[RMDB]
RNA sequence: GGGAACGACUCGAGUAGAGUCGAAAAGUUGAUCGAGAACAUCGGUCGCCUGAACUACGACGGUGAAACCACUUAUAACAACCUUUAUGUACACGGUGAUAAAGCGGCGUGGGCCGUCUAUCGCGUGCUGCUAAAACAACCGAUUACCAACGAUCAGAGGUAAGAAGAGGUUCGCCUCUUCUUACCUAAAAGAAACAACAACAACAAC
Reactivity to DMS in 0.01 (KOAc 150mM, MgCl2 10mM, bicine 150mM(pH8.5), 24C), signal-to-noise 2, nucleotides 027 to 156: g040u010u010g010a030u000c000g000a070g000a190a190c090a300u010c000g000g000u000c000g000c000c020u000g010a190a140c090u010a030c040g010a050c020g060g030u000g000a160a140a060c020c020a000c080u010u020a110u000a090a090c070a120a120c100c010u000u000u000a110u010g000u000a080c050a020c100g030g000u010g000a070u010a040a060a060g010c000g000g010c000g020u010g000g000g050c030c000g000u000c070u010a060u000c000g020c020g030u000g020c020u010g000c010u000a030a060a030a100c070a080a040c030c000g000a090u000u010a120c050c030a090a180c020g000a060u000c040a100g000
Reactivity to 2A3 in 0.01 (KOAc 150mM, MgCl2 10mM, bicine 150mM(pH8.5), 24C), signal-to-noise 6, nucleotides 027 to 156: g130u070u070g000a000u000c000g030a000g020a080a030c020a040u010c000g000g000u010c020g020c000c030u100g080a150a070c060u110a040c220g080a010c040g050g020u040g050a110a030a050c040c040a060c090u210u130a130u100a270a050c090a040a070c010c010u080u080u050a100u160g060u060a010c080a010c070g130g070u100g020a020u040a040a100a020g020c020g060g000c040g080u160g050g130g000c010c010g040u050c040u010a030u010c030g000c010g030u070g040c100u040g030c020u080a010a030a040a070c040a030a030c020c000g040a000u080u150a060c060c010a060a030c050g000a010u000c010a020g010